[RMDB]
RNA sequence: GGGAACGACUCGAGUAGAGUCGAAAAGUAAUCUUACAGUCCGGCGCGGAGCAUUGUUGAGCGGUCCAUGGGGAAACCUCCCUUCGUCCUUCGGCAUUGUGGUGCGUCGUGGGAAAGCGUGCCGCAUACCAUAGCUAAGGUUCGCCUUAGCUAUGGUAAAAGAAACAACAACAACAAC
Reactivity to DMS in 0.01 (KOAc 150mM, MgCl2 10mM, bicine 150mM(pH8.5), 24C), signal-to-noise 2, nucleotides 027 to 126: g020u000a070a120u000c020u010u000a080c130a100g000u010c110c010g000g000c060g000c050g030g010a190g000c030a020u000u000g000u000u000g000a030g010c150g040g000u000c040c170a060u020g000g010g010g010a040a060a090c170c120u000c020c010c000u000u000c220g000u000c020c030u050u000c060g010g010c020a060u000u020g020u000g010g030u000g020c020g000u000c010g010u000g020g020g000a090a070a150g000c010g000u000g010c020c000g000c060a120u010
Reactivity to 2A3 in 0.01 (KOAc 150mM, MgCl2 10mM, bicine 150mM(pH8.5), 24C), signal-to-noise 2, nucleotides 027 to 126: g000u020a020a110u020c050u040u130a050c050a040g080u050c040c010g040g020c040g000c030g020g030a080g030c020a070u020u080g060u020u060g040a060g000c080g060g030u020c070c020a120u170g000g030g020g000a040a110a120c010c060u080c030c010c040u020u030c100g030u020c000c000u050u060c000g040g000c010a040u050u050g040u040g060g050u050g050c020g000u010c060g030u100g000g040g000a050a040a000g020c040g010u010g000c010c000g050c030a040u020

This 177-nucleotide RNA was probed chemically with DMS and 2A3. 2A3 adducts were read by reverse transcription with SuperScript II with manganese. The reactions ran in a buffer of 150 mM KOAc, 10 mM MgCl2 and 150 mM bicine (pH 8.5), at 24 C.